Structure probing data (2A3) for a 207-nucleotide construct. The RNA was probed in 150 mM KOAc, 10 mM MgCl2 and 150 mM bicine (pH 8.5) at 24 C.

RNA sequence: GGGAACGACUCGAGUAGAGUCGAAAAGGGGUCUCUACCAAGAGCGCUAACUUCUUGGAUUUAUGGGACUGAAGCCUCCACGGUCCCAUUGUCAGAAGGACCCGCUCUUGUAGAGACGGAGGCACCCAAAAGGGAUUCGCCUUCGGGCGAAUCCCAACGUACGAAUAAUGUUCGCAUUAUUCGUACGAAAAGAAACAACAACAACAAC
Reactivity to 2A3 in 0.01 (KOAc 150mM, MgCl2 10mM, bicine 150mM(pH8.5), 24C), signal-to-noise 2, nucleotides 027 to 156: g050g000g030g020u000c000u020c000u010a040c100c180a010a000g000a000g000c010g020c090u080a040a040c000u050u090c040u200u300g140g000a120u230u300u180a020u050g000g000g000a000c000u000g030a080a000g030c000c030u040c000c030a030c010g000g000u030c010c000c000a000u020u030g000u010c040a030g040a050a000g040g010a030c010c040c000g000c020u000c000u000u000g000u000a000g010a010g010a000c000g000g000a000g000g010c020a040c000c000c000a000a100a020a020g020g000g000a000u030u020c010g040c020c040u070u080c300g060g000g000c000g000a000a000u000c000c000c000a010a010
The 2A3 profile rests on 1,436 reads.